[RMDB]
RNA sequence: GGGAACGACUCGAGUAGAGUCGAAAACGCACUCGCAGCUUAAUAACCUGCGCUGAGCCCUUCUCCCCCAGCUUGCCUGUGUCCUAGGGAAUUGGAAGGUCAUCCUUCACAGGAUCGUGUGGCAGUCAUUACUCGUGAGUGUUCGCACUCACGAGAACCCUUAUAACUGGUUCGCCAGUUAUAAGGGAAAAGAAACAACAACAACAAC
Reactivity to 2A3 in 0.01 (KOAc 150mM, MgCl2 10mM, bicine 150mM(pH8.5), 24C), signal-to-noise 3, nucleotides 027 to 156: c030g000c000a060c020u010c000g000c010a000g000c000u030u040a060a020u050a050a010c000c010u020g010c000g020c150u030g030a050g020c040c030c040u170u050c120u060c010c000c000c000c000a010g000c030u010u160g020c000c000u060g010u030g020u060c000c040u060a080g000g020g120a070a140u120u080g030g010a050a000g010g060u130c050a110u180c010c000u030u020c020a020c010a040g000g010a000u060c030g030u110g020u040g120g010c010a020g030u060c050a080u080u120a060c010u000c000g000u010g010a000g000u000g020u040u040c060g000c040a000c000u000c000a000c000g010a000g000a000a000
Reactivity to DMS in 0.01 (KOAc 150mM, MgCl2 10mM, bicine 150mM(pH8.5), 24C), signal-to-noise 2, nucleotides 027 to 156: c100g010c060a110c030u000c050g000c000a030g010c020u000u000a110a140u000a140a130c290c010u000g020c000g030c130u010g000a100g010c030c020c070u000u000c030u000c030c000c000c020c010a130g020c020u000u020g010c030c030u010g030u020g010u000c020c020u000a110g020g060g010a070a130u000u010g020g010a120a080g020g030u000c100a110u000c010c010u010u010c070a150c040a070g010g000a020u000c100g010u000g030u010g000g030c030a150g020u000c040a120u010u000a110c030u000c030g030u000g000a050g030u020g020u000u000c300g100c020a020c000u000c010a010c010g000a030g000a020a100
The record gives the reactivity of an RNA of 207 nucleotides to 2A3 and DMS.
Reactivities are rounded to 0.1 and cut off at 0 and 3.
For 2A3 the reverse transcriptase was SuperScript II with manganese.
The reactions ran in a buffer of 150 mM KOAc, 10 mM MgCl2 and 150 mM bicine (pH 8.5), at 24 C.
High DMS reactivity at an A or C suggests that its Watson-Crick edge is free.